[RMDB]
RNA sequence: GGGAACGACUCGAGUAGAGUCGAAAACCGCGGGCCGGCUACUCUUCUUUCUCUUUCGUCGUCAUCCCUGGCCAGCCUCCGGAGUUCCUCUUCUUCCUCUCGGCUGAGGUUCUUCCCCCCUCCGGCCUACCGGACGGGUUCGCCCGUCCGAAAAGAAACAACAACAACAAC
Reactivity to 2A3 in 0.01 (KOAc 150mM, MgCl2 10mM, bicine 150mM(pH8.5), 24C), signal-to-noise 9, nucleotides 027 to 129: c010c010g020c050g030g000g000c000c020g010g020c040u090a080c050u060c040u170u050c030u050u210u030c050u010c000u040u110u070c080g050u010c010g010u020c040a100u090c030c010c010u010g020g000c010c010a020g030c010c020u050c020c020g010g010a050g020u060u040c010c010u030c000u040u000c000u080u040c010c010u030c010u020c010g020g020c030u040g030a030g040g040u050u000c020u030u020c000c000c000c000c000c000u010c010c010g020g020c000c000u020a070c030
Reactivity to DMS in 0.01 (KOAc 150mM, MgCl2 10mM, bicine 150mM(pH8.5), 24C), signal-to-noise 7, nucleotides 027 to 129: c000c000g040c180g000g000g010c030c030g040g020c140u040a090c050u060c050u040u030c020u000u060u030c060u020c030u020u060u000c100g000u000c070g000u000c080a160u050c010c000c000u000g010g030c050c050a080g030c050c020u000c100c000g030g030a110g040u020u030c010c010u020c040u030u020c050u040u030c030c000u000c040u020c060g010g010c050u000g000a110g000g050u050u000c060u000u060c000c000c000c000c000c000u030c010c010g010g020c020c050u050a070c150
Chemical mapping of a 170-nucleotide RNA with 2A3 and DMS. The reactions ran in a buffer of 150 mM KOAc, 10 mM MgCl2 and 150 mM bicine (pH 8.5), at 24 C.